Description:
Conditions: 150 mM KOAc, 10 mM MgCl2 and 150 mM bicine (pH 8.5), 24 C. Structure probing data (2A3) for a 207-nucleotide construct. It was measured as part of the RMDB library RSTRND. As a SHAPE reagent, 2A3 marks flexible, mostly unpaired nucleotides at the ribose 2'-OH.

[RMDB]
RNA sequence: GGGAACGACUCGAGUAGAGUCGAAAAGGGGAUAGGUAGGAUUAAACAGCAGGCCGUGGUCGCACCCAACCACGUUAAAUAGGGUGCAAAAACACAACUGCCAACGAAUACGCCUACGCUUUGGCAGCCUAAGCGUGCUGCCACGCACCUUUAGACCGUAUGUAGGUGACUUCGGUCACCUACAUACAAAAGAAACAACAACAACAAC
Reactivity to 2A3 in 0.01 (KOAc 150mM, MgCl2 10mM, bicine 150mM(pH8.5), 24C), signal-to-noise 2, nucleotides 027 to 156: g020g000g010g040a080u130a080g010g080u000a000g030g030a010u100u200a060a130a080c010a060g010c010a000g010g040c020c020g010u000g000g000u010c030g010c000a000c000c000c000a000a040c020c030a020c180g100u110u040a010a010a010u050a010g000g000g000u020g000c010a020a020a020a020a020c070a020c040a110a080c030u080g000c010c010a070a050c040g060a080a030u070a130c150g000c000c020u000a030c000g010c030u110u090u130g000g000c000a000g000c000c000u080a090a060g020c050g030u090g000c060u010g000c020c020a000c000g020c000a000c000c000u010u080u000a100g040a030c010c030